This 207-nucleotide RNA was probed chemically with DMS and 2A3. 2A3 adducts were read by reverse transcription with SuperScript II with manganese. 2A3 is a SHAPE reagent: it acylates the 2'-hydroxyl of flexible nucleotides of all four kinds. Source: RMDB library OK3TST, as collected in RNAgym. For DMS the reverse transcriptase was MarathonRT. For DMS, 1,644 sequencing reads were counted.
[RMDB]
RNA sequence: GGGAACGACUCGAGUAGAGUCGAAAAAGAGCCCCCUUUUCUGGCUUUUCUUCCUUAGCAUUCUCAGAAACACACCAUCUAUGGCUUCCUUCCUGCCUCCAGGUGGUAGUGGUGCAACUCGAGGGCAAGGAGAACUUGAACCAUGUCCAAAGGGAAAUAGGAUCCUUUUAUUCGUAAAAGGAUCCUAAAAAGAAACAACAACAACAAC
Reactivity to DMS in 0.01 (KOAc 150mM, MgCl2 10mM, bicine 150mM(pH8.5), 24C), signal-to-noise 1, nucleotides 027 to 156: a050g000a150g010c040c040c020c010c040u000u000u020u010c050u000g050g000c010u000u010u000u020c020u000u000c010c000u010u000a140g000c020a130u010u000c010u000c110a150g020a180a140a070c060a010c000a100c000c000a050u000c020u000a110u010g020g030c000u010u020c090c060u000u000c110c070u010g030c000c000u000c090c070a040g020g060u000g000g050u010a040g000u000g000g050u020g010c060a060a120c050u000c080g010a110g090g020g000c010a060a030g010g040a080g030a020a030c280u010u000g030a050a100c030c000a050u000g000u000c060c070a090a080a100g010g030g010a010a050a220
Reactivity to 2A3 in 0.01 (KOAc 150mM, MgCl2 10mM, bicine 150mM(pH8.5), 24C), signal-to-noise 1, nucleotides 027 to 156: a020g140a070g120c010c000c000c020c040u020u010u030u130c050u080g050g000c000u030u020u020u000c020u100u160c010c010u010u000a030g010c020a060u180u050c020u000c020a020g070a090a150a000c000a010c000a000c010c000a000u010c000u030a020u060g000g020c020u240u110c000c060u130u130c000c040u060g010c000c020u000c060c090a020g010g000u010g010g000u080a070g020u020g000g050u070g070c020a100a080c000u030c120g000a010g010g020g000c000a020a020g000g010a020g000a000a000c020u010u060g000a080a060c000c000a150u210g030u110c090c020a000a020a040g020g000g050a030a040a030